[RMDB]
RNA sequence: GGGAACGACUCGAGUAGAGUCGAAAAUUGCACCUACCAAUUAUAUCGGAAGAUUUUGAAGUCAUAGUUUUCCUAUCGUAGUGUGCAAUAAAAACCGUUCUACUGCCACACGGGUACUGGCCUUGAAGCCGUACGCUAGGUUCGCCUAGCGUACGGCAAAAGAAACAACAACAACAAC
Reactivity to 2A3 in 0.01 (KOAc 150mM, MgCl2 10mM, bicine 150mM(pH8.5), 24C), signal-to-noise 1, nucleotides 027 to 126: u000u000g000c000a000c010c000u000a000c000c040a090a070u300u120a120u010a010u100c050g000g000a000a000g000a000u000u150u000u000g300a300a050g070u170c000a040u070a090g000u000u010u010u000c000c000u000a050u000c010g000u000a000g000u000g000u060g130c000a000a000u060a000a060a000a000a000c000c000g060u040u000c010u030a090c000u010g020c010c000a050c000a010c120g000g010g000u020a020c010u060g040g070c000c000u020u050g090a060a000
The data come from the RNA Mapping Database (RMDB), library RFM100. Structure probing data (2A3) for a 177-nucleotide construct. The reactions ran in a buffer of 150 mM KOAc, 10 mM MgCl2 and 150 mM bicine (pH 8.5), at 24 C.